[RMDB]
RNA sequence: GGGAACGACUCGAGUAGAGUCGAAAAGAUUGGUUUUUGCUCCUGCACCAUGGUUGUCUGAGCACGGAGCAUGCUUGUCUGCUCAUACGCCAUGGUUCGUGAGCAGGAACCUCCACUGCCCACCACGUCUGGCAACACUGUUCGCAGUGUUGCCAGAAAAAGAAACAACAACAACAAC
Reactivity to 2A3 in 0.01 (KOAc 150mM, MgCl2 10mM, bicine 150mM(pH8.5), 24C), signal-to-noise 2, nucleotides 027 to 126: g080a040u070u130g000g000u000u020u000u030u000g000c000u000c000c000u040g000c060a000c000c000a020u040g040g000u110u300g040u030c050u070g000a020g020c030a020c180g050g000a090g060c030a030u080g080c070u110u120g000u080c060u020g000c000u000c000a010u000a000c000g000c010c000a000u000g000g040u000u000c020g020u040g000a000g000c000a020g000g000a010a010c000c010u010c000c040a100c020u070g030c070c000c000a020c030c040a110c050g090